[RMDB]
RNA sequence: GGGAACGACUCGAGUAGAGUCGAAAAAGUGAUGACCUCUCAGCCCCUCCACCUUGGGGUGCCCUAUCCGAGCACUGCUGCUUCGGUAGAAAGGCUAAGCACGUCGCAAUGACGUAAGGUGGGACUUGUUCCUCAUCAUGUUCGCAUGAUGAGGAACAAAAGAAACAACAACAACAAC
Reactivity to 2A3 in 0.01 (KOAc 150mM, MgCl2 10mM, bicine 150mM(pH8.5), 24C), signal-to-noise 2, nucleotides 027 to 126: a000g120u050g040a080u080g140a120c000c010u030c020u000c020a010g010c010c010c000c040u040c010c000a000c010c020u000u020g000g000g000g010u000g010c020c000c000u030a000u000c000c000g010a000g020c040a090c190u300g140c080u040g000c020u150u210c000g000g000u000a000g010a010a070a010g000g020c000u020a020a010g110c010a010c000g010u020c040g000c180a260a300u300g000a000c000g010u000a000a000g000g000u000g010g010g000a020c040u040u000
Reactivity to DMS in 0.01 (KOAc 150mM, MgCl2 10mM, bicine 150mM(pH8.5), 24C), signal-to-noise 1, nucleotides 027 to 126: a000g010u000g020a050u010g030a050c110c120u020c070u000c020a090g000c000c020c000c000u030c000c000a050c010c040u010u000g020g000g000g000u000g020c000c020c000u000a160u000c000c020g000a040g000c000a040c240u000g020c230u000g020c040u000u020c020g040g000u000a010g000a050a120a090g020g010c040u020a020a090g030c300a030c010g020u020c000g000c250a170a060u040g050a030c000g040u000a000a000g000g020u000g000g000g000a070c140u000u000
The data come from the RNA Mapping Database (RMDB), library VIROID.
Chemical mapping of a 177-nucleotide RNA with 2A3 and DMS.
2A3 adducts were read by reverse transcription with SuperScript II with manganese.
Conditions: 150 mM KOAc, 10 mM MgCl2 and 150 mM bicine (pH 8.5), 24 C.
High DMS reactivity at an A or C suggests that its Watson-Crick edge is free.
DMS adducts were read by reverse transcription with MarathonRT.